This 177-nucleotide RNA was probed chemically with 2A3 and DMS. The 2A3 profile rests on 10,074 reads. DMS adducts were read by reverse transcription with MarathonRT. The reactions ran in a buffer of 150 mM KOAc, 10 mM MgCl2 and 150 mM bicine (pH 8.5), at 24 C.
[RMDB]
RNA sequence: GGGAACGACUCGAGUAGAGUCGAAAAGCAUGGUUCGUAUGAUGAGCAUGCGGCGCGGAUUAAGACGAUUCGUGAGAUUGCGCAAGAGGAGCGCCGUAAUGUGGCGAUCUUAUUGGAUACGAAGGGCCCUUGUGCCCUUAUUCGUAAGGGCACAAGGAAAAGAAACAACAACAACAAC
Reactivity to 2A3 in 0.01 (KOAc 150mM, MgCl2 10mM, bicine 150mM(pH8.5), 24C), signal-to-noise 6, nucleotides 027 to 126: g020c010a020u060g060g030u040u020c010g020u040a040u060g090a040u080g040a010g010c010a010u020g010c010g000g000c000g000c010g020g020a030u050u060a130a040g170a120c100g010a020u000u030c010g010u050g040a060g020a060u080u200g020c030g010c030a030a010g020a020g070g030a040g010c000g020c000c010g040u080a110a120u200g060u130g090g000c020g010a010u000c010u020u060a080u040u090g040g010a010u020a050c010g030a020a010g040g020g020c000
Reactivity to DMS in 0.01 (KOAc 150mM, MgCl2 10mM, bicine 150mM(pH8.5), 24C), signal-to-noise 6, nucleotides 027 to 126: g010c030a050u000g010g000u000u000c020g010u000a030u000g010a110u010g020a190g000c010a020u000g010c010g010g000c010g020c000g010g010a090u000u000a110a180g000a160c180g000a030u000u000c010g000u010g000a100g010a090u000u000g010c030g000c020a040a090g010a060g000g010a130g000c010g020c000c010g010u010a060a090u000g020u010g010g020c020g010a030u000c010u000u000a130u010u000g000g000a050u000a030c050g000a040a040g010g010g000c130